Chemical mapping of a 177-nucleotide RNA with DMS and 2A3.
DMS adducts were read by reverse transcription with MarathonRT.

RNA sequence: GGGAACGACUCGAGUAGAGUCGAAAACGCUGCGCGACCUGGUGCGCAAGCAGGAGCCGCAGCGGCUGACCGAUACGCUGGUGGUCGGCGCCUUCAUCGAGGCGCGUUCCUGCGAGCGCUUCGCCGACUCCAGCUAUACUUUCGAGUAUAGCUGGAGAAAAGAAACAACAACAACAAC
Reactivity to DMS in 0.01 (KOAc 150mM, MgCl2 10mM, bicine 150mM(pH8.5), 24C), signal-to-noise 5, nucleotides 027 to 126: c040g020c040u000g020c030g020c030g000a080c070c120u010g020g020u020g010c040g030c030a080a230g020c010a030g010g000a080g010c080c020g020c050a040g010c030g020g010c100u010g010a100c060c040g010a140u010a060c160g020c110u000g010g020u000g020g010u000c060g020g020c010g000c010c000u010u000c130a120u020c200g000a010g000g000c010g020c020g010u010u000c010c010u000g010c020g000a300g000c020g000c040u010u000c050g000c030c030g010a220
Reactivity to 2A3 in 0.01 (KOAc 150mM, MgCl2 10mM, bicine 150mM(pH8.5), 24C), signal-to-noise 5, nucleotides 027 to 126: c020g000c040u100g000c030g010c010g060a090c010c060u100g080g040u160g030c040g000c030a000a000g000c010a000g000g020a010g030c030c010g050c060a010g010c010g010g000c020u070g130a120c000c030g040a070u130a270c090g030c150u170g060g110u100g020g000u090c020g050g000c000g010c000c020u090u100c070a300u130c120g040a020g000g010c020g010c020g030u010u000c010c000u000g000c000g000a010g000c020g000c030u080u060c050g020c010c010g060a060
Overview:
It was measured as part of the RMDB library OK2TRN.